The record gives the reactivity of an RNA of 177 nucleotides to 2A3 and DMS. Values cover nucleotides 27 to 126. It was measured as part of the RMDB library OK2TRN. 2A3 adducts were read by reverse transcription with SuperScript II with manganese. DMS adducts were read by reverse transcription with MarathonRT. For DMS, 27,865 sequencing reads were counted.
[RMDB]
RNA sequence: GGGAACGACUCGAGUAGAGUCGAAAAGCACGAUGUUGCAGGACUUUGGCGCGACCACCAGCAAGACCGAAUGGCUGUUCGAGCACCGGGGCGAAGAUAUGCCGUUUGCCUACGCCCCGAACAGUGCAAGAAUAAUCGUUUUCGAACGAUUAUUCUUAAAAGAAACAACAACAACAAC
Reactivity to 2A3 in 0.01 (KOAc 150mM, MgCl2 10mM, bicine 150mM(pH8.5), 24C), signal-to-noise 6, nucleotides 027 to 126: g020c020a000c060g110a130u110g020u210u080g030c030a020g000g080a070c050u140u100u140g020g030c030g000c020g070a060c010c020a020c010c010a020g010c030a040a030g040a060c020c030g080a120a080u110g060g010c020u040g020u080u100c050g040a020g010c010a020c020c020g000g000g000g000c020g020a020a020g040a050u150a070u220g090c040c040g090u040u100u130g010c010c000u030a040c010g000c000c000c000c000g000a010a010c010a010g010u030g060c000
Reactivity to DMS in 0.01 (KOAc 150mM, MgCl2 10mM, bicine 150mM(pH8.5), 24C), signal-to-noise 9, nucleotides 027 to 126: g010c050a060c050g000a090u010g010u000u000g010c040a080g000g010a090c080u000u000u000g020g010c050g010c070g000a110c050c040a090c060c040a070g010c060a070a080g000a100c050c030g010a100a090u000g000g000c020u000g000u000u000c030g010a110g010c020a040c110c020g000g000g000g010c000g010a090a040g010a090u000a060u000g020c090c100g010u000u010u000g010c040c010u000a110c030g000c250c010c000c000g010a020a020c100a090g000u000g010c080